This 177-nucleotide RNA was probed chemically with DMS and 2A3.

RNA sequence: GGGAACGACUCGAGUAGAGUCGAAAAGGAGCGGAGCGUGUUUCAGAGGUGCGUAUAAAAUCCCAGGGGCGCCAGGAGGCAGCAGCGACGGCGCAGCGUGGGACGGCCAGGCGCGACGGGAGGGAAGUUUACUAUUCUACUUCGGUAGAAUAGUAAAAAAAGAAACAACAACAACAAC
Reactivity to DMS in 0.01 (KOAc 150mM, MgCl2 10mM, bicine 150mM(pH8.5), 24C), signal-to-noise 9, nucleotides 027 to 126: g000g000a080g020c100g000g000a100g000c120g020u010g010u000u000u010c050a100g010a120g010g030u010g010c040g020u010a070u030a050a090a120a150u010c000c000c020a110g000g000g010g010c030g000c020c010a110g020g010a150g010g000c050a080g010c090a090g010c050g000a120c130g000g000c030g010c020a040g000c010g000u000g000g000g000a050c080g010g010c100c100a090g000g010c040g000c020g000a080c050g010g000g000a080g000g000g000a080a070g000
Reactivity to 2A3 in 0.01 (KOAc 150mM, MgCl2 10mM, bicine 150mM(pH8.5), 24C), signal-to-noise 9, nucleotides 027 to 126: g060g010a060g080c080g020g020a050g020c070g010u040g020u020u040u050c050a030g030a030g080g040u060g030c020g010u040a040u060a120a080a010a030u020c000c000c000a020g020g020g010g000c020g000c010c010a060g050g050a060g070g020c020a050g010c040a020g030c070g050a050c050g030g020c020g000c020a030g060c060g090u040g020g020g010a040c020g010g020c020c020a030g050g000c020g000c020g040a050c040g010g010g010a100g020g010g000a030a020g000
Reactivities are given for positions 27 through 126.